[RMDB]
RNA sequence: GGGAACGACUCGAGUAGAGUCGAAAAGCCGCACCCCUCACAGGGUGAUCGCGUAGGUCGGCGUUCUGUUCGGGUGGAAGCACGGGUGAGAACUCGUGUGGACCGUUCAGUAACGAAAAUCCUGGUCAUUCACCUAUAUGUUCGCAUAUAGGUGAAUAAAAGAAACAACAACAACAAC
Reactivity to DMS in 0.01 (KOAc 150mM, MgCl2 10mM, bicine 150mM(pH8.5), 24C), signal-to-noise 9, nucleotides 027 to 126: g010c010c020g000c060a110c010c000c000c020u010c260a120c240a180g000g000g010u010g000a060u010c050g000c130g020u020a070g000g000u010c090g010g000c010g010u000u000c010u000g010u000u000c010g020g000g010u010g010g010a160a210g000c000a000c000g000g000g000u000g010a240g000a150a010c000u000c000g010u000g000u000g000g000a040c010c000g020u000u000c010a010g010u020a020a020c020g000a060a070a090a090u010c020c010u000g000g010u030c150
Reactivity to 2A3 in 0.01 (KOAc 150mM, MgCl2 10mM, bicine 150mM(pH8.5), 24C), signal-to-noise 9, nucleotides 027 to 126: g040c010c010g000c010a020c000c000c000c000u080c020a080c040a030g010g000g010u020g010a040u120c050g010c070g120u120a060g010g070u050c050g050g060c000g010u010u000c000u000g010u000u000c020g020g010g030u300g110g020a010a000g010c000a000c000g010g000g010u020g030a070g020a030a010c000u000c000g000u000g000u010g000g010a010c000c000g000u000u000c000a010g010u120a020a020c010g040a070a020a010a030u030c010c010u040g030g050u070c030
Structure probing data (DMS and 2A3) for a 177-nucleotide construct. Conditions: 150 mM KOAc, 10 mM MgCl2 and 150 mM bicine (pH 8.5), 24 C. Reactivities are given for positions 27 through 126. DMS adducts were read by reverse transcription with MarathonRT. 2A3 adducts were read by reverse transcription with SuperScript II with manganese. It was measured as part of the RMDB libraries RFM100 and RFMREP.